[RMDB]
RNA sequence: GGGAACGACUCGAGUAGAGUCGAAAACGAAGCGCUGCGGCAGGCCUUGCAGUUGCUCGACCACGCGCGGCAGGUCGGCCAGGUGGUCGCGCUCGAUCUCGAUCAGGCGCAGCCCGGCGCCGGCCAACCUAGUAAUGAUAUUCGUAUCAUUACUAGGAAAAGAAACAACAACAACAAC
Reactivity to DMS in 0.01 (KOAc 150mM, MgCl2 10mM, bicine 150mM(pH8.5), 24C), signal-to-noise 9, nucleotides 027 to 126: c080g010a120a090g010c040g000c010u000g020c060g020g020c050a150g010g000c060c020u010u000g020c080a110g010u000u010g020c020u000c040g000a130c030c010a070c100g000c060g010c080g000g010c060a100g010g020u000c030g010g010c010c010a130g010g010u010g020g010u000c050g010c030g010c010u000c060g000a030u000c060u010c280g010a030u000c020a040g000g000c000g020c010a080g010c000c010c010g000g000c090g020c000c000g000g000c020c030a070a100
Reactivity to 2A3 in 0.01 (KOAc 150mM, MgCl2 10mM, bicine 150mM(pH8.5), 24C), signal-to-noise 9, nucleotides 027 to 126: c020g050a080a030g020c010g000c030u040g010c040g060g000c050a140g070g060c020c010u080u150g010c020a080g020u220u250g050c010u020c010g030a040c010c000a050c030g130c010g000c030g080g020c070a070g020g020u030c020g010g010c010c010a050g020g100u170g020g040u080c030g000c000g000c010u020c030g030a050u010c040u050c160g060a060u030c020a030g010g000c010g000c020a010g000c000c010c000g060g000c100g000c000c010g000g000c000c020a030a040
An RNA of 177 nucleotides, treated with DMS and 2A3 and read out base by base. Values are in units of 0.01, from 0 to 300, in steps of 10. Conditions: 150 mM KOAc, 10 mM MgCl2 and 150 mM bicine (pH 8.5), 24 C. DMS adducts were read by reverse transcription with MarathonRT. For 2A3, 43,489 sequencing reads were counted. High DMS reactivity at an A or C suggests that its Watson-Crick edge is free. For 2A3 the reverse transcriptase was SuperScript II with manganese. The DMS profile rests on 23,766 reads.